RNA sequence: GGGAACGACUCGAGUAGAGUCGAAAAGAAAGAAAUUUUUAGGGAUAAACGUUAAUGUUUUAGACGAGUCUCCUAAAUUUUAGGGACUAAUGUCAUUUUUAACGUGUCUCCUAUUUUUAGGGACCAAAGUUAGGAGAUGUUUCGACAUCUCCUAACUAAAAGAAACAACAACAACAAC
Reactivity to DMS in 0.01 (KOAc 150mM, MgCl2 10mM, bicine 150mM(pH8.5), 24C), signal-to-noise 3, nucleotides 027 to 126: g010a080a120a100g010a060a090a060u010u010u010u000u000a050g000g010g000a030u010a070a050a040c000g000u000u010a000a040u020g010u030u030u050u030a100g010a020c010g010a030g000u000c000u090c000c010u000a000a080a120u020u010u010u000a020g000g000g000a010c000u000a020a070u010g000u030c000a070u030u010u000u000u010a000a010c000g000u000g000u010c160u030c000c000u000a050u000u000u010u000u010a050g000g000g000a300c030c000a070a050
Reactivity to 2A3 in 0.01 (KOAc 150mM, MgCl2 10mM, bicine 150mM(pH8.5), 24C), signal-to-noise 5, nucleotides 027 to 126: g130a000a080a010g130a070a100a040u130u160u090u110u100a050g010g010g000a010u070a130a240a030c010g000u010u010a020a020u090g140u060u180u080u130a060g010a010c010g010a010g030u000c180u280c040c020u040a050a100a300u170u240u060u030a000g000g000g000a000c000u050a070a130u160g020u000c010a030u110u120u050u040u030a010a000c000g000u000g020u000c030u060c020c000u010a040u000u020u010u020u070a040g010g000g070a020c020c000a060a090
Structure probing data (DMS and 2A3) for a 177-nucleotide construct.
Source: RMDB libraries RFM100 and RFMREP, as collected in RNAgym.
Conditions: 150 mM KOAc, 10 mM MgCl2 and 150 mM bicine (pH 8.5), 24 C.